Source: RMDB library OK3TST, as collected in RNAgym. The record gives the reactivity of an RNA of 207 nucleotides to DMS and 2A3. Reactivities are given for positions 27 through 156. Values are in units of 0.01, from 0 to 300, in steps of 10. For 2A3 the reverse transcriptase was SuperScript II with manganese. DMS adducts were read by reverse transcription with MarathonRT.
RNA sequence: GGGAACGACUCGAGUAGAGUCGAAAAUUGCGAAAAGAGGGGGUGGAACUACGUCUCUCCGAAAUCAGAAGACGAAGAGACAGAAGAUUCGGAAGAGGAAGAGGAUUCUGAAGAAGAAGAAGGAGAUUCGGAAGAAGGAGAGGAAUCCGCAGAGGAAUCUUCUACAAAAUUUCGAUUUUGUAGAAGAAAAAGAAACAACAACAACAAC
Reactivity to DMS in 0.01 (KOAc 150mM, MgCl2 10mM, bicine 150mM(pH8.5), 24C), signal-to-noise 1, nucleotides 027 to 156: u000u010g000c010g020a150a050a170a170g000a130g050g000g020g020g020u030g000g040a080a020c040u000a250c050g010u010c000u000c030u010c050c000g010a060a070a130u010c090a160g010a150a080g000a190c050g000a080a020g030a040g000a080c030a120g000a110a110g000a160u000u000c040g000g020a050a080g000a100g040g000a080a050g020a050g030g020a110u000u030c050u010g010a050a140g000a050a160g020a050a090g000a110a090g110g000a140g020a180u000u000c050g030g050a050a110g080a060a080g000g000a160g000a090g020g010a040a030u000c040c040g000c060a120g000a090g000g040a100a150
Reactivity to 2A3 in 0.01 (KOAc 150mM, MgCl2 10mM, bicine 150mM(pH8.5), 24C), signal-to-noise 1, nucleotides 027 to 156: u050u050g010c010g100a010a010a030a040g080a070g010g000g000g000g000u060g030g010a020a010c030u060a010c040g030u000c000u030c010u030c020c000g010a030a020a050u100c070a060g120a240a030g030a040c020g010a010a050g030a010g010a030c010a010g090a090a000g000a010u000u040c030g010g040a050a000g010a030g050g000a010a070g010a010g040g000a010u110u010c040u110g020a050a020g010a040a030g020a060a000g030a030a030g040g010a020g010a010u150u120c070g000g000a000a000g020a000a000g010g020a040g010a000g000g020a060a040u040c020c060g000c080a010g050a010g150g040a030a010